[RMDB]
RNA sequence: GGGAACGACUCGAGUAGAGUCGAAAAGUGAUGAUAAGUUCUACGUCAAGUCUGACGGUGGUUUUUAUGCCAAGGAAACUUCGCAGAUUGAUGGCAACCUGAAACUCAAGGACCCCACAGCGAAUGAUCAGUAUCUGAGCUUCGGCUCAGAUACUGAAAAAGAAACAACAACAACAAC
Reactivity to DMS in 0.01 (KOAc 150mM, MgCl2 10mM, bicine 150mM(pH8.5), 24C), signal-to-noise 1, nucleotides 027 to 126: g040u000g010a070u000g000a140u010a170a130g010u000u000c040u000a180c010g020u000c020a040a080g010u000c050u000g000a030c000g060g020u000g000g010u000u000u000u000u000a060u040g020c080c200a070a120g010g000a030a060a040c030u000u000c010g000c010a040g010a120u000u000g000a040u000g010g010c130a020a050c140c000u000g000a140a060a040c150u000c090a020a210g010g010a250c070c000c000c010a070c080a050g000c110g000a070a090u010g010a090